[RMDB]
RNA sequence: GGGAACGACUCGAGUAGAGUCGAAAAGGUGGCUAGGACGCAGGGGACCAGUGGAGCCGUGGGAUGCUCUUCCCAAUCUGACCUGACCCCUCCCCCAGCGGGUCGCCCAGGAAUGGCGGGACCCCACGAUACCUACAGUCUUCGGACUGUAGGUAUCAAAAGAAACAACAACAACAAC
Reactivity to 2A3 in 0.01 (KOAc 150mM, MgCl2 10mM, bicine 150mM(pH8.5), 24C), signal-to-noise 1, nucleotides 027 to 126: g040g020u060g000g060c040u040a030g070g010a050c030g000c050a000g010g010g020g050a040c020c070a060g030u050g110g020a020g030c010c110g070u140g020g050g030a100u060g030c020u000c030u030u010c030c000c020a000a050u060c050u040g040a060c010c010u020g110a100c000c030c000c000u040c000c000c000c000c000a010g030c070g010g010g000u000c030g110c080c000c000a020g030g100a150a080u030g010g030c080g040g000g010a000c000c000c010c000a020c040
Reactivity to DMS in 0.01 (KOAc 150mM, MgCl2 10mM, bicine 150mM(pH8.5), 24C), signal-to-noise 1, nucleotides 027 to 126: g010g050u010g010g000c060u010a080g000g010a090c200g030c060a050g020g000g000g000a140c130c030a150g000u010g000g000a020g000c110c130g000u020g010g010g040a120u010g010c070u000c090u000u010c080c030c020a060a170u020c060u010g010a060c080c020u000g010a270c010c000c010c000u000c030c040c000c040c070a080g000c130g000g000g000u000c030g010c010c010c030a040g020g010a050a150u000g000g020c220g000g000g010a030c030c000c020c070a060c140